[RMDB]
RNA sequence: GGGAACGACUCGAGUAGAGUCGAAAAUUGUGGUCAAGACCUUGGCGUAGUAUCCAAGGUUGUCAAGGUUCCUAUUGACUUAACAAUGAUUGAGUUUAUGUUAUGGUGUAAGGAUGGUCAGGGGAAAAUGGUUAAUAGCAUUCGUGCUAUUAACCAUAAAAGAAACAACAACAACAAC
Reactivity to DMS in 0.01 (KOAc 150mM, MgCl2 10mM, bicine 150mM(pH8.5), 24C), signal-to-noise 9, nucleotides 027 to 126: u000u000g030u000g010g010u000c040a060a080g000a020c000c000u000u000g000g010c230g010u010a150g020u010a140u000c040c040a030a020g000g010u000u000g010u000c090a060a060g010g000u000u000c050c080u000a110u000u000g010a020c010u000u010a070a030c040a050a050u000g000a130u000u000g010a090g010u000u000u000a050u020g010u000u000a060u000g000g010u010g010u010a070a060g010g000a070u000g010g000u000c040a060g010g010g000g000a050a060a080
Reactivity to 2A3 in 0.01 (KOAc 150mM, MgCl2 10mM, bicine 150mM(pH8.5), 24C), signal-to-noise 5, nucleotides 027 to 126: u020u020g040u030g030g020u040c030a000a050g010a010c000c000u000u000g010g000c050g070u090a030g080u050a120u080c040c010a040a020g020g010u020u030g010u000c000a020a010g050g020u040u080c010c000u030a120u010u050g010a010c010u040u080a070a000c020a040a130u110g070a190u100u160g060a070g130u080u100u070a110u120g090u100u080a080u140g060g030u040g010u090a050a030g030g020a040u040g010g030u050c020a020g000g010g010g050a030a100a000